RNA sequence: GGGAACGACUCGAGUAGAGUCGAAAAGCCGGAGCGCCAGCUUCGGUGGAGGCAUUGGUGGGAUACUACCCUGGCUGUAUUGAAAUUCUAACCCGCGCCCCUGAUCGGGGCGGGAGACAGUGUCAGGAUCAUGGACAGAAUUCGUUCUGUCCAUGAUAAAAGAAACAACAACAACAAC
Reactivity to 2A3 in 0.01 (KOAc 150mM, MgCl2 10mM, bicine 150mM(pH8.5), 24C), signal-to-noise 3, nucleotides 027 to 126: g020c010c020g000g020a010g020c060g060c130c150a060g000c010u000u010c020g020g000u010g010g030a090g010g050c090a110u040u220g040g020u100g040g010g060a040u040a220c040u100a090c000c010c010u000g010g000c020u040g030u080a100u090u130g120a080a120a060u170u060c050u070a080a170c000c010c030g050c030g130c030c010c000c020u070g070a140u160c070g000g000g000g010c020g000g010g000a000g000a010c010a010g060u000g020u140c010a000g010g010
Reactivity to DMS in 0.01 (KOAc 150mM, MgCl2 10mM, bicine 150mM(pH8.5), 24C), signal-to-noise 6, nucleotides 027 to 126: g010c010c010g030g010a020g020c010g020c180c230a150g010c010u000u000c020g020g020u010g010g010a080g010g010c080a070u000u000g010g000u010g010g010g010a110u000a050c100u010a110c150c010c020u000g000g010c020u000g000u010a090u000u010g010a090a090a140u010u000c080u010a110a210c030c000c010g010c030g010c010c000c000c020u010g000a120u010c250g010g010g000g010c000g000g000g000a060g010a060c100a050g000u000g000u000c030a060g000g000
Conditions: 150 mM KOAc, 10 mM MgCl2 and 150 mM bicine (pH 8.5), 24 C. This 177-nucleotide RNA was probed chemically with 2A3 and DMS. 2A3 adducts were read by reverse transcription with SuperScript II with manganese. In probing experiments dimethyl sulfate is read out at A N1 and C N3, which are open when not base-paired. For 2A3, 3,280 sequencing reads were counted.